[RMDB]
RNA sequence: GGGAACGACUCGAGUAGAGUCGAAAAAGCUGGGCACCGACAGGGUUGGCGCAACAGAAGCGUCCUGAGACCGCAAAUUAGAUAUUGAUGCUGAUUCAAAACUUGUGGUGCCAGUUGUCGAAUCCAGCGGCCAGUAAUUAUUCGUAAUUACUGGCCGAAAAGAAACAACAACAACAAC
Reactivity to DMS in 0.01 (KOAc 150mM, MgCl2 10mM, bicine 150mM(pH8.5), 24C), signal-to-noise 4, nucleotides 027 to 126: a050g010c040u000g000g000g060c090a060c180c010g000a010c000a000g020g020g040u000u000g020g010c000g010c000a150a130c230a200g000a130a140g010c030g010u010c020c070u010g000a110g000a080c060c060g030c010a050a000a030u010u010a160g000a060u000a300u020u020g000a120u040g030c100u010g000a070u000u000c050a040a080a100a130c070u010u010g030u030g000g000u000g000c040c010a000g000u010u010g000u000c040g000a120a220u020c020c030a060g000
Reactivity to 2A3 in 0.01 (KOAc 150mM, MgCl2 10mM, bicine 150mM(pH8.5), 24C), signal-to-noise 5, nucleotides 027 to 126: a000g030c000u040g000g040g000c040a030c120c000g070a000c020a030g010g000g070u090u110g030g010c000g040c020a040a180c050a220g220a220a010g040c010g000u060c020c000u180g030a080g030a010c020c040g000c010a000a030a020u120u090a070g130a160u130a140u160u150g110a110u140g060c120u090g120a160u100u030c040a040a030a080a060c010u010u020g010u020g020g000u030g020c010c010a020g010u030u040g050u010c020g010a020a020u010c000c000a000g000